[RMDB]
An RNA of 207 nucleotides, treated with DMS and 2A3 and read out base by base.
Conditions: 150 mM KOAc, 10 mM MgCl2 and 150 mM bicine (pH 8.5), 24 C.
For DMS the reverse transcriptase was MarathonRT.
For 2A3 the reverse transcriptase was SuperScript II with manganese.

RNA sequence: GGGAACGACUCGAGUAGAGUCGAAAAAAUUUUGCGGCAAUAGGAAAGGGGCUUAUAAAUAAGUGCUAAAAAUGUGAGUUGCCAGGUUUCCAGGGAAGAGCAGAUAAGAUGAACUAGAACAACUUGAAGUAUCUUUCAUUAACUCUAAUCAAGUUGUUCUCCAAAAACUAUUCGUAGUUUUUGGAGAAAAAGAAACAACAACAACAAC
Reactivity to DMS in 0.01 (KOAc 150mM, MgCl2 10mM, bicine 150mM(pH8.5), 24C), signal-to-noise 1, nucleotides 027 to 156: a000a090u000u000u000u010g000c000g060g000c000a010a110u010a160g030g020a060a130a080g010g020g050g060c060u000u010a080u000a020a050a070u010a050a120g030u010g030c120u020a020a040a020a080a050u020g000u010g010a160g010u000u000g000c010c030a100g000g020u000u000u000c030c020a080g010g000g020a070a040g020a080g020c030a050g010a050u010a030a030g000a110u000g000a040a080c090u010a050g030a070a040c040a010a020c020u000u000g010a040a120g010u010a040u010c030u000u020u000c060a070u000u000a040a080c010u020c020u000a040a120u000c030a010a040g030u000u000g010u010
Reactivity to 2A3 in 0.01 (KOAc 150mM, MgCl2 10mM, bicine 150mM(pH8.5), 24C), signal-to-noise 3, nucleotides 027 to 156: a000a020u150u180u080u110g040c030g010g000c070a050a060u030a120g030g000a040a050a030g010g020g000g000c020u110u040a070u050a120a100a030u070a060a040g050u090g080c040u090a060a060a000a050a070u100g060u030g030a080g020u020u030g020c030c010a020g060g040u030u050u000c020c000a010g000g010g010a020a010g010a030g020c010a000g020a030u140a090a020g020a040u110g060a040a020c030u160a040g040a030a010c010a000a020c010u020u010g030a060a020g030u050a050u030c070u030u170u030c050a090u060u110a070a040c020u030c040u110a130a180u080c020a050a000g010u000u050g000u030